Structure probing data (DMS and 2A3) for a 170-nucleotide construct. For 2A3, 5,195 sequencing reads were counted. The reactions ran in a buffer of 150 mM KOAc, 10 mM MgCl2 and 150 mM bicine (pH 8.5), at 24 C. 2A3 adducts were read by reverse transcription with SuperScript II with manganese.

RNA sequence: GGGAACGACUCGAGUAGAGUCGAAAAUUGCCUGUGGCUAUUUGUUUGACUUAUGCAAACAUAGUCUACGAGCCCACUACUCCCAUUUCGUCAGCGCUGAUUGCAGUUGCAAAUUGGCUUGCCCCCACUAGCCAUUCCUUCGGGAAUGGCAAAAGAAACAACAACAACAAC
Reactivity to DMS in 0.01 (KOAc 150mM, MgCl2 10mM, bicine 150mM(pH8.5), 24C), signal-to-noise 3, nucleotides 027 to 129: u000u000g030c110c050u010g070u030g000g000c060u020a030u030u020u030g040u000u000u090g030a150c130u030u050a070u000g040c060a000a000a000c010a030u000a040g000u030c000u030a040c020g010a130g020c010c170c080a160c000u040a110c170u020c000c020c010a130u030u090u090c140g020u040c020a060g010c060g050c100u020g030a080u000u000g020c000a160g000u070u020g000c000a040a050a100u010u050g000g040c100u000u020g030c000c000c000c000c000a180c060u010a020
Reactivity to 2A3 in 0.01 (KOAc 150mM, MgCl2 10mM, bicine 150mM(pH8.5), 24C), signal-to-noise 4, nucleotides 027 to 129: u100u120g030c010c010u090g010u050g000g000c020u050a050u060u070u110g100u000u010u000g070a210c050u200u200a080u300g150c040a000a020a000c000a020u010a000g000u040c010u000a010c040g020a020g020c010c000c020a080c020u090a050c090u010c010c000c030a070u060u230u080c110g050u030c030a040g010c010g010c120u040g060a100u050u030g030c010a030g130u090u130g100c030a000a060a110u010u010g020g010c000u040u060g020c000c000c000c000c000a020c030u010a010